[RMDB]
RNA sequence: GGGAACGACUCGAGUAGAGUCGAAAACCGCGCACCAGGGGCCGGCGGACAGAAGAGCGGCCGAGCGGCUCGAGGCUGGGGGACCGCGGGCGCGGCCGCGCGCUGCCGGGCGGGAGGCUGGGGGGCCCUGGUGUUGGUGGUUCGCCACCAACACCAGAAAAGAAACAACAACAACAAC
Reactivity to 2A3 in 0.01 (KOAc 150mM, MgCl2 10mM, bicine 150mM(pH8.5), 24C), signal-to-noise 1, nucleotides 027 to 126: c010c000g040c020g010c010a050c040c020a020g020g020g040g030c000c020g020g000c000g030g020a070c070a180g150a160a030g060a080g020c020g000g030c000c010g010a050g090c070g120g000c030u000c000g000a050g030g000c070u090g040g030g000g040g010a010c010c010g010c030g000g010g000c000g010c000g000g000c000c000g010c000g010c000g010c040u000g000c020c010g000g000g000c020g010g030g020a150g040g000c090u070g050g010g000g000g020g020c000c040